[RMDB]
RNA sequence: GGGAACGACUCGAGUAGAGUCGAAAAAGGCUAGACGGCCUGGAGAUAUUUCAGCCUGGAAAUGAGUGUAUGGGGUGUAUCAUGCAGGAAUCUCGAUAACGUUACGAAGCAUUACAGGUUGUGUGCCGAUUUUAGGGGGUUUCGACCCCCUAAAAUCAAAAGAAACAACAACAACAAC
Reactivity to DMS in 0.01 (KOAc 150mM, MgCl2 10mM, bicine 150mM(pH8.5), 24C), signal-to-noise 2, nucleotides 027 to 126: a020g000g000c000u000a020g020a080c110g030g020c000c020u000g010g000a050g000a090u030a070u050u030u030c000a040g010c010c040u010g010g020a110a050a010u000g000a070g040u000g000u010a080u000g010g000g020g000u020g020u000a030u040c020a000u020g050c040a090g000g000a080a060u020c040u000c020g020a090u020a080a100c160g000u020u010a050c030g000a080a080g000c060a020u000u010a130c060a010g010g010u010u000g010u000g020u000g040c130c090
The record gives the reactivity of an RNA of 177 nucleotides to DMS. It was measured as part of the RMDB library OK1LIB.